This 177-nucleotide RNA was probed chemically with DMS and 2A3. As a SHAPE reagent, 2A3 marks flexible, mostly unpaired nucleotides at the ribose 2'-OH. For 2A3, 4,081 sequencing reads were counted. The RNA was probed in 150 mM KOAc, 10 mM MgCl2 and 150 mM bicine (pH 8.5) at 24 C.
RNA sequence: GGGAACGACUCGAGUAGAGUCGAAAACAUAGCCAUAAUGAAGCAAGGUAGAGCGGGCCAGUGAGCAAAUGCUGUCGGCUGUCGCUUGAGACGGAGCCACAACAUCAAGCAGAAUACCCAAUUCAUACAUCAAGUAUGGGUUCGCCCAUACUUGAUGAAAAGAAACAACAACAACAAC
Reactivity to DMS in 0.01 (KOAc 150mM, MgCl2 10mM, bicine 150mM(pH8.5), 24C), signal-to-noise 4, nucleotides 027 to 126: c110a090u010a100g010c020c030a070u000a140a060u000g010a090a110g010c060a090a080g010g000u000a050g010a080g030c050g040g000g020c020c020a080g020u000g010a100g010c060a090a070a070u010g020c020u010g000u000c150g010g000c010u000g020u000c050g020c080u000u010g000a050g030a110c020g000g010a080g010c020c010a020c050a030a030c030a030u000c060a060a090g000c050a060g010a070a080u000a080c010c030c010a070a100u000u000c040a040u000a210
Reactivity to 2A3 in 0.01 (KOAc 150mM, MgCl2 10mM, bicine 150mM(pH8.5), 24C), signal-to-noise 4, nucleotides 027 to 126: c010a050u150a040g060c000c000a060u100a220a100u180g040a060a010g050c070a060a020g040g060u080a050g030a020g060c020g000g010g040c010c010a050g050u060g100a040g040c030a040a090a160u150g010c010u040g040u070c040g030g020c010u020g080u140c040g000c050u070u080g020a010g010a030c040g020g030a020g030c000c030a020c000a030a010c000a030u070c020a020a030g020c010a010g090a080a050u100a080c000c010c000a020a060u080u090c040a050u060a170